[RMDB]
RNA sequence: GGGAACGACUCGAGUAGAGUCGAAAAUCCGUUGUCUUCGGACAACGGAAAAGAAGCGCGGACACAAAAGCACGAGCUCGCCGUGACGCGCAAAGGGGAUAAAAAGCUCAAACUUCGGUUUGAGCAAGACCACUCUUAACUUCGGUUAAGAGUGGUCAAAAGAAACAACAACAACAAC
Reactivity to 2A3 in 0.01 (KOAc 150mM, MgCl2 10mM, bicine 150mM(pH8.5), 24C), signal-to-noise 1, nucleotides 027 to 126: u010c000c010g000u010u000g010u020c020u050u040c230g120g000a000c010a000a000c000g010g010a030a040a000a000g030a180a060g020c000g010c000g030g090a060c010a010c010a030a080a010a030g040c030a020c250g070a090g020c010u040c000g030c070c000g000u010g010a030c000g000c000g020c030a000a000a030g000g000g000g000a020u100a160a150a030a050a040g000c000u000c020a000a000a000c010u040u080c250g050g030u010u000u000g010a000g000c000a000a000
Reactivity to DMS in 0.01 (KOAc 150mM, MgCl2 10mM, bicine 150mM(pH8.5), 24C), signal-to-noise 2, nucleotides 027 to 126: u000c000c000g020u000u000g000u000c000u010u040c160g030g010a000c020a020a000c000g000g000a010a000a030a100g000a170a140g010c010g010c010g010g010a110c000a020c020a050a180a140a030g040c050a120c300g000a220g010c030u010c000g000c300c210g000u000g000a140c020g010c010g040c000a000a060a110g000g000g030g000a150u010a040a080a070a040a110g010c010u000c000a000a000a010c000u010u010c220g010g000u000u000u010g000a020g010c030a010a050
This 177-nucleotide RNA was probed chemically with 2A3 and DMS. Source: RMDB library M2PK50, as collected in RNAgym. For 2A3 the reverse transcriptase was SuperScript II with manganese. The RNA was probed in 150 mM KOAc, 10 mM MgCl2 and 150 mM bicine (pH 8.5) at 24 C.